RNA sequence: GGGAACGACUCGAGUAGAGUCGAAAAUUGGUGGUUGUUUUUUAACCUAUAAAAGAUAAUGGAAUACAUUUUAUAGACUGGAUUUUAUCUGUUCCCUUGGCCUCUCCUGGCUGUACUCAGUUUAAUAUCUAAUGACAUGUUUCGACAUGUCAUUAGAAAAAGAAACAACAACAACAAC
Reactivity to 2A3 in 0.01 (KOAc 150mM, MgCl2 10mM, bicine 150mM(pH8.5), 24C), signal-to-noise 2, nucleotides 027 to 126: u080u100g050g000u010g010g000u040u010g020u030u010u010u040u020u090a040a030c010c000u030a030u040a120a060a000a000g090a040u130a120a080u230g090g030a110a090u100a160c030a070u020u040u030u030a070u010a030g020a010c070u040g060g000a050u040u090u000u040a070u110c050u040g040u020u030c010c010c000u000u050g000g000c000c000u020c000u010c010c010u020g040g000c010u010g000u020a060c020u050c030a000g000u030u050u090a130a070u100a060
Reactivity to DMS in 0.01 (KOAc 150mM, MgCl2 10mM, bicine 150mM(pH8.5), 24C), signal-to-noise 3, nucleotides 027 to 126: u000u040g000g010u010g010g000u010u000g000u000u000u010u010u000u000a070a110c080c000u030a040u010a030a020a040a030g000a100u020a070a090u010g010g000a140a110u010a130c060a050u000u000u000u000a040u000a020g000a120c080u000g010g030a090u010u000u010u030a060u020c060u000g000u000u000c020c000c010u010u010g000g000c030c010u000c110u000c060c050u000g000g000c010u010g010u010a020c080u010c100a090g010u000u000u010a050a040u010a100